[RMDB]
RNA sequence: GGGAACGACUCGAGUAGAGUCGAAAAGAUUACGUGCCGUUGUGGAAUCGAUACUACGCACGAGAUUCCAAGGUCUCUGUAGUACGUCCGCUGGUGACGUCUUUGGAGUCACGUUCGAUAUACGAAAGGUAUCUAGUAGGUUCGCCUACUAGAUACCAAAAGAAACAACAACAACAAC
Reactivity to DMS in 0.01 (KOAc 150mM, MgCl2 10mM, bicine 150mM(pH8.5), 24C), signal-to-noise 5, nucleotides 027 to 126: g000a090u010u020a050c060g020u000g020c030c040g010u000u000g020u000g000g010a060a020u040c030g010a140u010a030c050u010a030c010g020c170a100c130g000a090g000a010u000u000c120c210a090a090g000g000u020c000u010c030u000g000u010a020g020u020a000c020g010u000c000c000g020c100u020g000g020u000g010a010c040g000u000c000u000u010u000g000g000a100g010u000c040a110c060g010u000u000c010g030a160u020a060u020a060c070g010a040a110a080
Reactivity to 2A3 in 0.01 (KOAc 150mM, MgCl2 10mM, bicine 150mM(pH8.5), 24C), signal-to-noise 6, nucleotides 027 to 126: g030a030u130u140a030c040g010u060g000c010c010g040u040u040g000u030g020g060a050a010u120c020g000a030u010a040c030u020a010c030g030c030a030c080g010a010g010a010u090u040c090c030a060a040g080g000u030c000u000c020u060g020u010a020g010u030a040c000g000u010c000c010g000c140u120g070g080u110g070a010c000g010u030c010u000u010u030g030g010a010g010u030c020a010c120g020u020u030c030g010a050u010a010u040a250c060g090a140a060a020
An RNA of 177 nucleotides, treated with DMS and 2A3 and read out base by base. It was measured as part of the RMDB library OK1LIB. The reactions ran in a buffer of 150 mM KOAc, 10 mM MgCl2 and 150 mM bicine (pH 8.5), at 24 C.